Conditions: 150 mM KOAc, 10 mM MgCl2 and 150 mM bicine (pH 8.5), 24 C.
This 207-nucleotide RNA was probed chemically with DMS and 2A3.
The DMS profile rests on 4,460 reads.

RNA sequence: GGGAACGACUCGAGUAGAGUCGAAAAACACGCAUUCGUGCGUGUAACACGGGGUCUGCCGCAGAUAGUAUGAUCGCGAGGAUCCUGAAGCCUCCACGGGGGAGCGGGUAUACUGUAGGCAGACGGAGGCACCCUCAGGCACUGCUUCGGCAGUGAAUAUCUAUACGCUCUUCGGAGCGUAUAGAUAAAAAGAAACAACAACAACAAC
Reactivity to DMS in 0.01 (KOAc 150mM, MgCl2 10mM, bicine 150mM(pH8.5), 24C), signal-to-noise 2, nucleotides 027 to 156: a060c000a020c000g000c000a100u000u010c270g030u000g000c000g060u010g020u040a020a080c060a100c050g020g000g040g030u000c010u000g010c050c040g010c110a100g050a170u010a120g010u000a070u010g010a060u010c030g020c020g000a210g040g020a090u000c020c010u020g010a050a130g030c020c010u010c010c030a300c070g010g030g010g000g020a130g020c010g010g020g020u000a070u000a020c020u020g000u000a070g050g000c030a030g000a050c030g000g030a040g060g030c060a120c000c000c010u000c070a170g030g000c020a040c010u010g000c010u000u000c300g040g020c030a020g020u000g010a060a150
Reactivity to 2A3 in 0.01 (KOAc 150mM, MgCl2 10mM, bicine 150mM(pH8.5), 24C), signal-to-noise 3, nucleotides 027 to 156: a010c010a000c010g010c000a030u100u120c290g150u050g000c020g000u010g000u050a060a050c090a020c120g020g010g010g030u000c010u000g010c010c000g000c020a010g040a120u150a060g210u170a200u300g150a120u090c020g000c040g010a150g070g070a100u060c000c010u030g040a050a020g020c000c000u000c020c010a030c020g000g000g010g030g000a020g030c030g020g040g040u180a100u070a200c010u040g060u170a250g030g000c000a000g000a010c000g000g000a000g000g000c000a000c000c000c010u060c050a060g160g000c010a000c000u000g020c010u080u100c230g130g020c000a000g000u000g000a010a010